[RMDB]
RNA sequence: GGGAACGACUCGAGUAGAGUCGAAAAGGGGUCUAAUGGAAGAGCCAUAGCUUUUGACGCUCUGAAGCCUCCACGGAGCGAUAAGCUAUGGAACUACUCUUCUGCAUUAGACGGAGGCACCCAAAGUGUACAGCUGGCUUCGGCCAGCUGUACACAAGUCUAUAUAGAACUUCGGUUCUAUAUAGACAAAAGAAACAACAACAACAAC
Reactivity to 2A3 in 0.01 (KOAc 150mM, MgCl2 10mM, bicine 150mM(pH8.5), 24C), signal-to-noise 1, nucleotides 027 to 156: g030g000g010g000u000c000u000a010a010u040g020g000a000a000g010a000g050c000c000a010u010a000g010c040u010u300u290u290g140a100c080g000c000u000c000u000g040a170a030g000c000c010u000c000c000a010c000g010g000a010g000c010g080a100u060a250a050g000c020u020a010u070g000g050a010a000c030u220a080c000u040c000u020u020c020u040g000c000a010u000u000a000g000a010c020g000g000a020g000g000c030a010c000c000c000a060a070a030g010u000g000u010a000c020a010g000c010u050g000g050c050u060u120c300g110g000c020c010a000g000c000u000g000u000a000c000a000c000a000a000
Chemical mapping of a 207-nucleotide RNA with 2A3. The reactions ran in a buffer of 150 mM KOAc, 10 mM MgCl2 and 150 mM bicine (pH 8.5), at 24 C. Source: RMDB library RNAMAK, as collected in RNAgym.